[RMDB]
RNA sequence: GGGAACGACUCGAGUAGAGUCGAAAAUCGUCUUAAUUCGUUAAGACGAACUCACGGAUUGUGUCCGUAAUCACAGAAAUAAAAUAAAAGUAACAAAAUAAAAUCAUCUCAUGUUCGCAUGAGAUAAACUUGAUUUGAUUUUCGAAUCAAAUCAAGUAAAAGAAACAACAACAACAAC
Reactivity to 2A3 in 0.01 (KOAc 150mM, MgCl2 10mM, bicine 150mM(pH8.5), 24C), signal-to-noise 2, nucleotides 027 to 126: u000c000g000u000c000u000u040a030a040u060u020c130g060u080u000a000a000g000a000c010g000a030a040c020u030c020a030c010g000g080a150u110u100g020u020g040u020c010c010g100u120a020a100u070c000a000c010a010g070a030a280a030u160a070a100a100a020u270a150a110a090a000g080u120a190a000c030a040a140a080a040u300a200a120a030a030u100c050a030u000c010u020c000a010u010g030u040u030c220g000c100a010u010g000a000g030a010u020a000a020
Reactivity to DMS in 0.01 (KOAc 150mM, MgCl2 10mM, bicine 150mM(pH8.5), 24C), signal-to-noise 1, nucleotides 027 to 126: u000c000g000u000c000u000u000a010a030u010u010c160g010u000u000a000a000g000a020c000g010a030a100c040u010c010a300c090g000g000a040u000u010g010u000g000u020c030c000g020u000a080a030u020c000a030c000a070g000a110a070a120u010a070a100a070a160u030a020a090a050a080g000u000a040a070c040a020a060a060a120u000a030a090a080a100u000c060a050u000c000u000c000a030u000g000u020u000c200g000c000a000u000g000a000g040a010u000a010a050